[RMDB]
RNA sequence: GGGAACGACUCGAGUAGAGUCGAAAAGGGGUCCACGGACUCUGAGGAGUUCGAGGGACAAUUUGUGACGUAUGGCUGAAGCCUCCACGGCCAUACGUCACAAAUUGUCCUACCCACCGAACUCUACCCACCAGAGUUCCGUGGACGGAGGCACCCAGAAAUGUUAUAUCUUCGGAUAUAACAUUUCAAAAGAAACAACAACAACAAC
Reactivity to 2A3 in 0.01 (KOAc 150mM, MgCl2 10mM, bicine 150mM(pH8.5), 24C), signal-to-noise 2, nucleotides 027 to 156: g100g000g040g010u000c000c000a000c000g000g000a010c000u000c000u000g030a060g020g000a000g010u010u000c040g020a140g000g020g010a010c000a000a000u010u000u000g000u000g010a000c010g010u000a000u000g000g030c010u000g020a080a010g020c010c000u000c010c030a130c030g000g010c000c020a010u000a000c000g000u000c000a000c000a000a000a000u000u000g000u000c000c010u010a010c030c030c010a020c060c000g000a000a000c000u000c010u090a150c100c110c060a050c020c010a000g000a000g030u300u070c010c000g000u010g000g000a000c000g000g000a000g000g000c010a030c000c000c000a000
Reactivity to DMS in 0.01 (KOAc 150mM, MgCl2 10mM, bicine 150mM(pH8.5), 24C), signal-to-noise 2, nucleotides 027 to 156: g000g020g020g030u010c000c020a060c000g050g010a070c010u010c020u000g010a230g000g020a040g030u010u000c000g000a150g020g080g030a040c010a020a020u000u000u000g040u010g000a050c020g030u000a010u000g020g000c030u000g000a050a110g010c020c000u000c010c030a300c050g000g000c000c000a010u000a000c020g010u000c000a000c000a010a010a000u000u000g020u000c010c000u000a020c050c050c030a300c090c050g000a020a000c000u010c000u010a030c000c010c070a300c100c000a030g010a110g020u000u000c000c060g040u010g000g000a000c000g000g010a040g000g030c000a070c010c000c020a230